[RMDB]
RNA sequence: GGGAACGACUCGAGUAGAGUCGAAAAUGAGAUGAGUUCCUUCCACCAUCUUUCUGGAACUAGCUAAGGGGUUCCCCUUACCUACUACCUAGGUAGACCUGAUUUAUUAAGACGGGAAUCGCAAUAGGGCUAAAUGGCACUUCGGUGCCAUUUAGCCAAAAGAAACAACAACAACAAC
Reactivity to 2A3 in 0.01 (KOAc 150mM, MgCl2 10mM, bicine 150mM(pH8.5), 24C), signal-to-noise 1, nucleotides 027 to 126: u250g000a190g000a000u120g000a000g170u000u000c130c000u000u000c000c000a060c000c000a000u000c090u000u300u150c190u130g000g000a000a000c040u000a000g000c070u080a000a250g000g130g000g290u000u000c000c000c000c000u020u000a000c000c000u000a000c000u080a040c000c000u240a140g000g000u190a060g080a060c000c000u210g170a300u020u000u010a300u020u230a080a000g080a000c000g000g100g010a090a130u040c060g000c000a000a280u000a170g000